[RMDB]
RNA sequence: GGGAACGACUCGAGUAGAGUCGAAAAAUGAUCCUGUACCGGACUGAGGAAGUGCCUAACGACAUCUACGUGUACGCAUACGUGGACGAUCAGGGCGGCGGUCAACGCUUGCUCGAUUCGUGGUCGAAGUGGCAUUACCACCCAACGCUGGGUCGCACUCUAGCUAAAUCUUCGGAUUUAGCUAGAGAAAAGAAACAACAACAACAAC
Reactivity to 2A3 in 0.01 (KOAc 150mM, MgCl2 10mM, bicine 150mM(pH8.5), 24C), signal-to-noise 7, nucleotides 027 to 156: a000u170g020a040u020c010c010u050g030u060a060c030c050g010g070a070c110u120g040a100g050g020a040a010g010u010g000c000c010u040a070a040c010g010a000c000a040u010c010u020a000c010g010u030g080u090a110c180g090c240a060u040a110c000g000u000g000g010a020c010g000a020u030c160a100g010g000g000c000g010g000c020g000g060u280c130a230a190c060g050c000u250u300g000c000u010c010g020a060u130u080c040g010u090g060g010u010c000g020a140a030g070u110g040g000c000a000u000u020a010c020c030a010c010c000c000a060a020c130g000c020u040g000g020g000u020c000g010c020a010
Reactivity to DMS in 0.01 (KOAc 150mM, MgCl2 10mM, bicine 150mM(pH8.5), 24C), signal-to-noise 2, nucleotides 027 to 156: a060u010g010a050u000c010c000u010g010u000a070c080c080g000g020a080c040u000g010a110g020g010a190a080g060u000g030c000c030u030a090a300c000g000a050c020a190u010c010u000a010c000g000u010g020u000a120c300g040c180a120u010a000c040g020u010g010g010a060c000g000a120u000c100a300g030g000g010c000g020g020c030g000g000u000c120a070a080c020g020c010u000u000g030c000u000c000g010a100u000u010c080g000u000g000g030u010c000g020a090a140g020u000g010g030c020a070u000u000a080c060c010a080c030c030c010a060a130c060g000c070u000g010g000g000u000c040g020c090a210